[RMDB]
RNA sequence: GGGAACGACUCGAGUAGAGUCGAAAAGAUAUGGAAGUGAAUCUUUAAGCUUUCGCGUUGAAAUCGGAAACGAUGGAGCGAAAGAAAACAAGACACUUCCUAAGUCAAAGAUCACUUCGGUGAUCAAGUACGCAUCAUAGUUCGCUAUGAUGCGUACAAAAGAAACAACAACAACAAC
Reactivity to DMS in 0.01 (KOAc 150mM, MgCl2 10mM, bicine 150mM(pH8.5), 24C), signal-to-noise 2, nucleotides 027 to 126: g000a050u010a270u000g020g010a000a030g020u000g010a150a150u000c000u000u010u000a180a150g000c010u000u000u000c000g010c010g000u020u040g010a120a100a020u000c000g010g000a100a120a140c020g000a000u010g000g000a140g010c000g000a000a000a000g010a030a020a110a220c270a050a000g000a020c000a040c010u000u000c010c000u000a030a060g020u010c050a060a050a090g000a040u010c010a030c000u010u010c230g040g010u000g000a020u000c020a070a090
Reactivity to 2A3 in 0.01 (KOAc 150mM, MgCl2 10mM, bicine 150mM(pH8.5), 24C), signal-to-noise 2, nucleotides 027 to 126: g020a030u090a030u180g000g000a000a000g020u000g090a280a300u040c000u000u090u060a150a020g060c000u020u010u000c000g000c000g160u270u120g060a090a110a020u010c000g000g020a060a050a050c030g000a010u030g000g050a020g000c000g010a010a010a000g000a010a050a000a010c040a000a000g000a010c000a010c000u030u010c000c000u000a130a030g000u020c020a020a100a130g020a000u010c010a000c030u060u140c300g160g000u000g000a020u030c000a000a000
Notes:
Chemical mapping of a 177-nucleotide RNA with DMS and 2A3. DMS adducts were read by reverse transcription with MarathonRT. 2A3 adducts were read by reverse transcription with SuperScript II with manganese.